RNA sequence: GGGAACGACUCGAGUAGAGUCGAAAAUCUUUGGCUUUCGAGCCAAAGAGUGGGUGCAAUGUCCAUUAAGCACCAAACACGGAAAAACCGUGAAAGGACAAAAAAAUCACAGUUUCGACUGUGAUAAUAUCAGAUUACAAUUCGUUGUAAUCUGAUAAAAAGAAACAACAACAACAAC
Reactivity to 2A3 in 0.01 (KOAc 150mM, MgCl2 10mM, bicine 150mM(pH8.5), 24C), signal-to-noise 5, nucleotides 027 to 126: u000c000u000u010u000g000g000c010u050u060u110c240g090a010g000c000c000a000a000a000g010a010g030u120g120g020g000u010g000c060a170a300u130g010u000c000c000a010u090u130a080a010g000c000a000c000c010a010a040a010c000a000c000g000g040a240a130a050a140a100c000c000g000u000g020a090a030a010g000g000a010c000a000a140a000a020a000a000a010u010c000a000c000a000g000u010u060u140c170g070a020c000u000g000u000g010a000u030a030a000
Reactivity to DMS in 0.01 (KOAc 150mM, MgCl2 10mM, bicine 150mM(pH8.5), 24C), signal-to-noise 5, nucleotides 027 to 126: u000c000u000u010u000g000g010c000u000u000u010c160g010a030g020c000c000a000a010a000g010a030g020u010g020g010g040u000g010c010a180a080u000g010u000c000c000a120u000u010a100a180g010c000a010c000c000a090a110a270c010a000c000g010g000a130a140a080a170a150c010c000g000u000g010a040a060a110g000g000a020c020a010a010a040a080a070a090a050u000c000a000c000a010g010u000u000u010c190g020a040c000u000g010u000g000a010u000a030a090
Chemical mapping of a 177-nucleotide RNA with 2A3 and DMS. Values cover nucleotides 27 to 126. The 2A3 profile rests on 10,936 reads. 2A3 adducts were read by reverse transcription with SuperScript II with manganese.